[RMDB]
RNA sequence: GGGAACGACUCGAGUAGAGUCGAAAAUUUGGGAGACUGAGGUGGGCAGGUCGCUUAAGGUCAGGGGUUUGAGACCAGCUUGGCCAAACUGGUGAAACCCCAUCUCUACUAAAACUACAAAAAUUAGCUGGACGUGGUGGCAUGCGCCUGUGGUCCCGCCAUGUCUAGUUUUCGAACUAGACAUGGCAAAAGAAACAACAACAACAAC
Reactivity to 2A3 in 0.01 (KOAc 150mM, MgCl2 10mM, bicine 150mM(pH8.5), 24C), signal-to-noise 2, nucleotides 027 to 156: u060u050u040g030g010g010a080g000a010c070u070g030a030g090g060u070g020g050g000c070a020g090g000u100c050g010c040u150u120a070a020g030g010u040c100a030g020g000g050g010u040u060u110g100a090g050a040c000c000a020g040c030u040u070g060g020c030c000a080a070a020c060u010g040g000u010g000a030a030a020c010c000c010c000a030u030c030u000c010u030a070c020u060a050a140a100a050c060u120a080c130a020a080a000a020a030u110u050a030g000c100u080g010g040a030c040g040u060g000g000u020g030g000c030a030u090g000c020g050c000c000u030g030u070g080g010u000c030c000c000